[RMDB]
RNA sequence: GGGAACGACUCGAGUAGAGUCGAAAACAACAGAAUCAAUUUGCUCACAACAAAGAGAUGCAGCAGCAAGGAUUCGGACAUGAAUUUGCAAUGCAAGGAAACAUGUUCCAAUUCAAUCGCGAAAUUUUGGCUAGCCAGCAGGAUUUUGCCAAGAUGAUACAGACGGACAUUUCGAUGUCCGUCUGUAAAAAGAAACAACAACAACAAC
Reactivity to 2A3 in 0.01 (KOAc 150mM, MgCl2 10mM, bicine 150mM(pH8.5), 24C), signal-to-noise 1, nucleotides 027 to 156: c080a010a010c010a010g090a070a020u160c090a120a120u040u060u180g000c010u050c000a100c070a000a230c040a050a190a010g090a030g030a060u130g090c070a030g000c010a000g000c040a030a140g020g000a020u030u030c030g000g000a000c000a000u070g070a120a060u100u060u070g040c110a190a150u240g000c030a040a000g060g080a160a010a020c040a000u000g020u030u030c010c050a010a070u000u060c010a030a030u140c070g010c000g090a030a210a040u060u090u000u020g010g000c000u000a010g020c000c030a020g000c080a110g140g000a100u130u120u130u120g020c010c000a000a010g050a030u130g000a000